RNA sequence: GGGAACGACUCGAGUAGAGUCGAAAAUCGUGUUCUCUCGAGUUCACUCACGAGAUCACACUCUCGUGAGUUCUCGAUCACACUCGAGUGUACACGAUCGAGUGAGAGUGUUCUCUCGAGUGAGAUCACGUUCGAUCGUGAGUACACGAACACGAGAUAGGUUAACUAGCUUCGGCUAGUUAACCUAAAAAGAAACAACAACAACAAC
Reactivity to 2A3 in 0.01 (KOAc 150mM, MgCl2 10mM, bicine 150mM(pH8.5), 24C), signal-to-noise 3, nucleotides 027 to 156: u010c000g000u000g020u030u000c040u000c000u000c000g000a000g020u070u110c050a000c020u000c000a000c000g020a010g000a000u160c150a060c040a030c240u000c000u000c020g000u010g000a000g000u040u050c010u000c010g020a020u040c000a010c010a000c010u010c000g000a000g000u010g010u030a010c000a000c000g000a010u000c020g030a070g150u300g130a060g000a010g010u030g000u070u020c040u010c000u000c010g010a010g020u070g010a030g000a000u010c010a010c020g030u090u090c080g080a230u150c010g080u110g020a010g020u110a040c060a020c150g010a000a000c020a000c020g030a040g010a090
Reactivity to DMS in 0.01 (KOAc 150mM, MgCl2 10mM, bicine 150mM(pH8.5), 24C), signal-to-noise 1, nucleotides 027 to 156: u000c020g030u000g020u000u000c010u000c010u020c000g000a010g040u010u000c130a090c000u000c010a020c030g020a020g010a140u000c170a210c170a110c230u000c010u010c000g040u000g000a070g000u000u010c050u000c070g000a150u000c020a280c070a090c000u000c000g000a110g020u000g000u000a050c040a020c000g020a090u000c000g010a150g010u010g010a090g010a300g000u000g010u000u000c010u000c000u000c030g000a190g000u000g000a110g040a080u000c010a030c020g030u000u000c060g010a050u000c000g000u010g000a080g000u000a080c030a070c120g000a000a040c010a040c000g010a090g000a140